[RMDB]
RNA sequence: GGGAACGACUCGAGUAGAGUCGAAAAGAAAGAAGCUAGCGAAACAAAAGUCGGUGCAUCGACAUGGAUGAAUACAUGCGACGAGCUGGUACCGACAUAAACAGCUCGAACGCUAGCGAAAAGAAAAGGGUAACAGUAUCUUCGGAUACUGUUACCCAAAAGAAACAACAACAACAAC
Reactivity to DMS in 0.01 (KOAc 150mM, MgCl2 10mM, bicine 150mM(pH8.5), 24C), signal-to-noise 1, nucleotides 027 to 126: g000a100a240a000g000a090a100g000c010u000a000g110c000g000a160a100a200c000a000a050a000a100g000u000c000g000g030u000g000c030a030u000c020g000a300c030a060u070g010g020a110u040g000a060a120u210a110c170a110u000g110c080g070a090c100g000a000g040c030u070g040g050u050a020c090c020g000a000c020a050u100a040a060a020c000a000g040c000u000c000g060a220a300c000g000c000u000a000g010c000g040a170a040a010a140g000a010a050a000a010

Chemical mapping of a 177-nucleotide RNA with DMS.
The data come from the RNA Mapping Database (RMDB), library OK1LIB.
The RNA was probed in 150 mM KOAc, 10 mM MgCl2 and 150 mM bicine (pH 8.5) at 24 C.